RNA sequence: GGGAACGACUCGAGUAGAGUCGAAAAGAGAAAAGCAAUUAUUAUUGAAGGUGCCGAGUUAUUUAAUGAAUCCCCUUCAGAUGGUAUUGCCUUUUUAACUCAGCAUUCUAUCAUCAAGCAAUCCGAAGCGUAUGGUAAUGUUCGCAUUACCAUACGCAAAAGAAACAACAACAACAAC
Reactivity to DMS in 0.01 (KOAc 150mM, MgCl2 10mM, bicine 150mM(pH8.5), 24C), signal-to-noise 2, nucleotides 027 to 126: g010a180g000a050a030a050a040g000c020a040a030u010u010a050u000u010a060u000u000g020a040a020g000g010u010g030c120c060g010a140g000u000u000a080u010u010u010a040a050u040g000a160a090u000c010c070c010c050u020u010c050a050g000a050u000g000g010u000a030u010u010g000c030c050u020u000u020u000u020a000a090c030u010c030a070g020c060a060u000u000c010u000a070u010c050a040u000c120a060a020g000c080a070a100u010c000c010g010a110a160
Reactivity to 2A3 in 0.01 (KOAc 150mM, MgCl2 10mM, bicine 150mM(pH8.5), 24C), signal-to-noise 1, nucleotides 027 to 126: g040a000g030a000a040a000a000g010c000a000a040u180u030a030u070u030a020u090u180g000a000a000g000g010u020g040c050c030g020a000g040u000u040a130u260u230u170a110a070u070g020a000a040u050c020c020c000c000u000u010c040a050g050a250u070g000g040u030a000u020u040g040c000c000u050u000u000u010u050a050a070c010u000c010a000g020c010a010u170u000c030u070a130u100c000a000u010c010a090a000g000c010a020a130u000c010c030g050a070a040

An RNA of 177 nucleotides, treated with DMS and 2A3 and read out base by base.
For DMS the reverse transcriptase was MarathonRT.
The DMS profile rests on 1,341 reads.
Conditions: 150 mM KOAc, 10 mM MgCl2 and 150 mM bicine (pH 8.5), 24 C.
For 2A3, 1,181 sequencing reads were counted.